[RMDB]
An RNA of 177 nucleotides, treated with DMS and 2A3 and read out base by base. The reactions ran in a buffer of 150 mM KOAc, 10 mM MgCl2 and 150 mM bicine (pH 8.5), at 24 C. Values are in units of 0.01, from 0 to 300, in steps of 10.
RNA sequence: GGGAACGACUCGAGUAGAGUCGAAAACACAGAGUGACACACACUGACACAGACAGAGAGAGACAGAGUCAGACUGAGACACAGUCAGUGAGUCACUGACAGUGUGUGUGACUGUGAGUCUGACAGAUCCCACCCCUAUAUUCGUAUAGGGGUGGGAAAAAGAAACAACAACAACAAC
Reactivity to DMS in 0.01 (KOAc 150mM, MgCl2 10mM, bicine 150mM(pH8.5), 24C), signal-to-noise 3, nucleotides 027 to 126: c030a090c040a040g010a040g010u000g000a050c000a000c010a020c020a040c010u010g000a140c060a100c110a100g000a070c070a130g010a170g000a090g000a160g000a060c060a090g010a150g030u000c030a060g010a050c070u000g000a170g000a100c130a070c070a030g020u000c000a080g000u000g010a180g010u000c030a060c140u000g000a060c010a030g010u000g010u000g010u010g000u000g000a030c010u010g030u000g000a050g000u000c020u000g010a090c050a100g000a140
Reactivity to 2A3 in 0.01 (KOAc 150mM, MgCl2 10mM, bicine 150mM(pH8.5), 24C), signal-to-noise 2, nucleotides 027 to 126: c050a010c000a000g090a030g150u120g090a080c010a000c000a000c010a000c000u050g040a000c020a010c010a130g070a020c020a010g160a010g020a000g020a010g040a150c020a060g100a050g150u020c000a030g030a060c000u030g080a020g050a120c020a010c010a140g030u020c000a020g030u050g160a060g070u070c020a010c010u000g000a010c000a020g030u000g000u030g000u010g010u050g070a010c010u000g060u010g040a050g050u060c060u070g100a040c000a090g100a080
For 2A3 the reverse transcriptase was SuperScript II with manganese. Values cover nucleotides 27 to 126.